[RMDB]
RNA sequence: GGGAACGACUCGAGUAGAGUCGAAAAUCCUGCAGGUGAUGGGGGCUGUAGCAAUUUUAUUGAAGAUUCAAGUUUGAUUGACCUUUGUUAGGGUGAUUAACCUUUCUGAAAUUAAAAGCCAGAGCUGAGAAACGACAAGUUUCGACUUGUCGUUUCUAAAAGAAACAACAACAACAAC
Reactivity to 2A3 in 0.01 (KOAc 150mM, MgCl2 10mM, bicine 150mM(pH8.5), 24C), signal-to-noise 3, nucleotides 027 to 126: u080c010c000u020g080c080a020g030g020u110g020a050u120g000g010g020g000g000c000u010g010u010a000g000c020a070a140u010u030u010u040a050u090u070g030a000a050g020a060u050u070c050a000a040g030u010u020u100g060a040u000u100g210a060c020c000u090u060u110g160u190u270a070g030g000g010u070g010a010u030u030a000a000c000c000u030u090u030c020u020g000a070a050a010u090u050a010a050a070a000g020c080c010a040g000a020g030c040u060g030
Reactivity to DMS in 0.01 (KOAc 150mM, MgCl2 10mM, bicine 150mM(pH8.5), 24C), signal-to-noise 3, nucleotides 027 to 126: u000c000c000u000g010c040a070g010g010u010g020a070u020g000g010g000g000g000c010u000g010u000a040g030c090a070a060u030u020u000u040a020u010u010g020a200a060g010a070u040u010c100a050a060g000u010u000u010g030a000u000u000g010a040c050c000u000u010u050g020u010u020a060g010g000g000u000g000a030u000u000a020a040c070c020u000u020u000c010u000g000a170a020a050u020u030a050a070a060a160g000c090c050a120g010a090g030c060u000g000

Source information:
This 177-nucleotide RNA was probed chemically with 2A3 and DMS. The reactions ran in a buffer of 150 mM KOAc, 10 mM MgCl2 and 150 mM bicine (pH 8.5), at 24 C. The data come from the RNA Mapping Database (RMDB), library RFM100. The 2A3 profile rests on 1,235 reads. High DMS reactivity at an A or C suggests that its Watson-Crick edge is free. For 2A3 the reverse transcriptase was SuperScript II with manganese.